The data come from the RNA Mapping Database (RMDB), library RFMREP. This 177-nucleotide RNA was probed chemically with DMS and 2A3. Reactivities are given for positions 27 through 126. DMS adducts were read by reverse transcription with MarathonRT.
RNA sequence: GGGAACGACUCGAGUAGAGUCGAAAAAUGAUCAUAUCGACGAUAUUCACCUUCUUGCUAGCGGAUCUUUCGAGAUCCGUUUUUUCAGGUCAUGGAGCUUUUUGUGCCGUUUCGGUCUCGGAACGGGCCUUAUCCUGUACUUCGGUACAGGAUAAGGAAAAGAAACAACAACAACAAC
Reactivity to DMS in 0.01 (KOAc 150mM, MgCl2 10mM, bicine 150mM(pH8.5), 24C), signal-to-noise 4, nucleotides 027 to 126: a080u000g010a080u010c100a100u000a130u000c040g010a080c090g020a140u000a050u000u000c040a100c060c030u000u000c040u000u000g020c180u000a070g000c000g000g000a000u000c000u000u000u010c190g020a010g010a010u000c000c000g010u000u000u000u010u010u000c050a050g000g000u000c050a090u010g010g010a070g010c060u000u010u000u000u000g000u000g020c010c010g000u000u000u000c000g000g020u010c240u010c010g000g000a020a010c010g020g000g010
Reactivity to 2A3 in 0.01 (KOAc 150mM, MgCl2 10mM, bicine 150mM(pH8.5), 24C), signal-to-noise 3, nucleotides 027 to 126: a020u150g010a040u070c030a040u100a040u120c040g080a040c020g020a030u010a050u120u060c050a080c010c010u060u040c020u030u110g050c030u030a000g000c000g010g010a010u000c000u010u050u100c240g040a020g000a030u000c000c000g000u000u010u020u000u000u020c000a010g020g020u040c010a070u110g110g020a060g010c040u090u080u100u150u160g150u150g090c000c000g000u010u020u000c020g020g100u080c180u170c220g010g000a000a000c010g020g000g020
The reactions ran in a buffer of 150 mM KOAc, 10 mM MgCl2 and 150 mM bicine (pH 8.5), at 24 C.